The data come from the RNA Mapping Database (RMDB), library ARCHII. Structure probing data (2A3) for a 207-nucleotide construct. The RNA was probed in 150 mM KOAc, 10 mM MgCl2 and 150 mM bicine (pH 8.5) at 24 C.
RNA sequence: GGGAACGACUCGAGUAGAGUCGAAAAGAUCCAUUUUGCAAGUUCGUUAUUACGGGUAGUUCCUACAAAGGAUCGGACUAAUGACGUAUACAAUACUUGAAUUCUCGAUGUAGAUGCUACAUAGUUGGUUCUCAUCCUUCAGAGACUACGAGUGUAAGCAAAGUACCAUGUUCGCAUGGUACUUUGCAAAAGAAACAACAACAACAAC
Reactivity to 2A3 in 0.01 (KOAc 150mM, MgCl2 10mM, bicine 150mM(pH8.5), 24C), signal-to-noise 2, nucleotides 027 to 156: g070a070u020c040c020a030u050u040u050u170g110c140a160a150g020u080u120c040g030u020u000a080u080u070a070c010g070g140g000u040a070g000u080u030c030c000u020a140c070a030a100a000g030g000a030u000c040g040g160a000c020u030a000a050u040g010a070c040g040u040a080u040a020c060a110a030u020a170c000u010u020g140a120a200u300u020c160u060c130g140a120u170g020u130a010g070a110u100g050c050u020a010c010a040u090a080g030u000u010g000g000u050u000c010u000c000a050u050c000c000u050u020c010a010g020a000g010a120c010u020a050c040g090a030g110u020g040u110a060a050